[RMDB]
RNA sequence: GGGAACGACUCGAGUAGAGUCGAAAAAGUGAGUAUGGCUCGUUACGACGAGCCAUACUCACAACGGUUUUCCUAAAUCGCCGUGAGACGGACCUUGGAAAACCUAGUAUUUAAAUAACUAGGUCAAAUUAGCCUAGAUCCUUCGGGAUCUAGGCAAGCCAAUGUUUAGGUUCGCCUAAACAUUGGCAAAAGAAACAACAACAACAAC
Reactivity to 2A3 in 0.01 (KOAc 150mM, MgCl2 10mM, bicine 150mM(pH8.5), 24C), signal-to-noise 1, nucleotides 027 to 156: a000g010u000g000a000g030u010a010u000g000g010c000u000c090g030u060u040a110c230g000a000c000g000a080g000c020c040a000u000a000c000u000c040a010c000a000a000c000g000g000u000u000u000u000c000c000u000a000a000a050u030c050g030c060c040g040u070g130a130g020a030c050g040g000a070c070c070u060u060g000g000a000a160a000a000c020c000u020a000g060u020a030u070u110u050a210a300a220u180a030a000c010u010a010g000g010u020c050a000a130a210u250u110a040g000c000c000u000a000g000a000u020c000c000u000u000c150g100g000g000a000u000c000u000a000g010g000c000a000a000